RNA sequence: GGGAACGACUCGAGUAGAGUCGAAAACACAGAUGCGCUGCAUGGCGACAUCGGCAUUGUGGGCCGAGAUGAUCUGGUGGUCAUUGUGUCGAAGUCCGGCGCCACUGAGGAGCUGCUUCGCUUGGUCUCAGUUAAGUCAGUUCGCUGACUUAACUGAAAAAGAAACAACAACAACAAC
Reactivity to 2A3 in 0.01 (KOAc 150mM, MgCl2 10mM, bicine 150mM(pH8.5), 24C), signal-to-noise 3, nucleotides 027 to 126: c040a000c000a010g070a060u070g010c020g000c020u090g010c070a150u180g090g000c030g100a060c020a050u020c000g020g000c020a050u120u200g080u140g090g080g040c000c020g050a040g000a070u110g010a030u040c060u210g150g070u140g020g000u160c010a020u040u090g070u000g040u050c030g040a050a010g040u050c060c040g010g000c020g030c000c020a040c040u080g040a060g060g000a020g040c030u090g010c020u090u070c060g020c060u030u070g050g060u030c030
Reactivity to DMS in 0.01 (KOAc 150mM, MgCl2 10mM, bicine 150mM(pH8.5), 24C), signal-to-noise 5, nucleotides 027 to 126: c070a140c090a090g010a080u000g000c030g010c030u010g010c230a080u000g010g020c040g000a070c050a080u000c010g010g010c050a080u010u010g020u000g020g000g010c000c000g010a060g000a070u010g000a040u000c020u000g030g010u010g010g010u010c010a040u000u000g010u010g010u000c000g000a080a080g010u000c090c050g010g010c020g000c010c060a090c100u000g000a120g010g010a100g010c030u000g010c050u000u000c070g000c080u000u000g010g010u000c090